[RMDB]
RNA sequence: GGGAACGACUCGAGUAGAGUCGAAAAGUGAUCAAUUUGGACAUGUAAAUGAAUCAAAAGGUCAAAAUGUAUUGCUUGAGUAUGUUUCAGCUAACCCUACAGGAGAUUUACAUAUUGGUCAUGCUAGACUCCAAUGCAGGUUCGCCUGCAUUGGAGUAAAAGAAACAACAACAACAAC
Reactivity to 2A3 in 0.01 (KOAc 150mM, MgCl2 10mM, bicine 150mM(pH8.5), 24C), signal-to-noise 3, nucleotides 027 to 126: g000u000g000a000u020c020a050a090u030u110u240g150g090a120c110a060u050g000u110a010a090a010u030g300a090a000u000c020a010a160a140a050g010g030u050c000a050a000a010a210u180g170u130a210u090u180g010c040u190u120g000a010g000u100a120u300g100u010u170u020c010a000g000c000u010a040a060c000c000c000u050a000c050a020g050g050a110g020a000u010u000u040a030c000a000u050a040u040u000g070g000u020c000a000u060g010c010u050a030g020
Reactivity to DMS in 0.01 (KOAc 150mM, MgCl2 10mM, bicine 150mM(pH8.5), 24C), signal-to-noise 2, nucleotides 027 to 126: g010u000g040a020u000c020a030a050u000u070u000g040g010a180c160a070u000g010u030a030a090a020u000g010a050a070u010c110a020a110a020a090g000g010u000c110a120a030a090a060u020g060u000a080u010u000g030c040u000u000g000a060g020u010a100u010g010u020u090u000c080a040g000c080u020a060a140c140c000c010u010a090c170a140g000g000a090g000a010u000u000u020a070c010a030u000a060u000u000g000g030u000c000a010u000g040c050u000a060g000
This 177-nucleotide RNA was probed chemically with 2A3 and DMS. The reactions ran in a buffer of 150 mM KOAc, 10 mM MgCl2 and 150 mM bicine (pH 8.5), at 24 C. For 2A3, 1,172 sequencing reads were counted. DMS adducts were read by reverse transcription with MarathonRT.